[RMDB]
RNA sequence: GGGAACGACUCGAGUAGAGUCGAAAAGUUAGGCCGAGGUGUCGCCUACGUGACGGUCAAAGAUGGGCUACAUUUUCUAUUAUAGAAUAGACAAACGGAUACCACUCUGAAAUGGGUGGUUGAAGGCAAAAACCAUGGUUUUCGAACCAUGGUUUUUAAAAGAAACAACAACAACAAC
Reactivity to 2A3 in 0.01 (KOAc 150mM, MgCl2 10mM, bicine 150mM(pH8.5), 24C), signal-to-noise 3, nucleotides 027 to 126: g050u090u070a090g060g000c030c010g020a030g080g090u040g020u070c020g000c000c000u010a050c010g060u090g010a030c060g000g040u090c080a090a090a000g100a110u030g010g010g000c000u020a020c030a080u050u100u060u000c000u010a030u030u090a110u130a180g200a130a040u020a010g060a010c140a090a180a000c010g000g000a000u000a000c000c000a000c030u000c000u060g020a000a080a060u220g000g000g000u000g000g000u000u000g000a010a000g020g030c030
Reactivity to DMS in 0.01 (KOAc 150mM, MgCl2 10mM, bicine 150mM(pH8.5), 24C), signal-to-noise 5, nucleotides 027 to 126: g010u030u020a050g010g000c010c030g000a090g020g010u020g010u040c050g000c020c040u000a060c120g030u010g000a130c080g000g000u020c060a080a060a080g010a090u020g010g000g010c050u000a060c080a040u020u010u000u000c010u000a030u020u020a160u040a130g010a050a020u010a030g000a020c300a030a050a110c050g000g000a160u010a010c010c000a010c000u000c000u000g000a080a080a080u030g000g000g020u000g000g020u010u010g000a280a100g010g010c210
Structure probing data (2A3 and DMS) for a 177-nucleotide construct. The RNA was probed in 150 mM KOAc, 10 mM MgCl2 and 150 mM bicine (pH 8.5) at 24 C.